This 177-nucleotide RNA was probed chemically with 2A3 and DMS. The RNA was probed in 150 mM KOAc, 10 mM MgCl2 and 150 mM bicine (pH 8.5) at 24 C.

[RMDB]
RNA sequence: GGGAACGACUCGAGUAGAGUCGAAAAGGCGCCCGUCGCGGUUGCGGCGAGGCUGGCUUGUUGGCAUUGCGGCGACGCUGCUCGCGUUGGCCGGUGGCCUUGGCGCAGCGGGUUAUUUUGCGUUGCGAUCGGAGAAUACGUUCGCGUAUUCUCCGAUAAAAGAAACAACAACAACAAC
Reactivity to 2A3 in 0.01 (KOAc 150mM, MgCl2 10mM, bicine 150mM(pH8.5), 24C), signal-to-noise 1, nucleotides 027 to 126: g050g000c020g000c000c010c000g030u000c010g000c030g080g300u170u300g020c020g000g020c000g050a180g000g000c030u020g050g000c020u010u060g050u100u040g100g000c070a100u030u240g110c050g020g000c000g030a010c000g010c030u090g070c060u060c130g000c000g070u080u040g080g000c030c030g050g010u060g080g010c000c040u030u080g020g000c020g000c020a000g050c060g050g000g000u140u170a180u100u140u230u130g030c010g000u000u040g010c020g040
Reactivity to DMS in 0.01 (KOAc 150mM, MgCl2 10mM, bicine 150mM(pH8.5), 24C), signal-to-noise 2, nucleotides 027 to 126: g010g000c100g000c020c000c000g020u000c010g030c010g030g010u030u040g000c000g010g020c000g000a080g010g000c000u010g010g040c040u010u030g010u020u010g020g000c070a230u010u020g040c060g010g000c020g030a020c000g040c010u020g000c070u010c080g010c000g000u050u010g010g000c030c030g000g010u020g000g030c050c030u020u030g010g000c010g000c020a100g020c010g010g000g000u020u020a130u020u020u020u020g000c010g010u000u000g020c010g010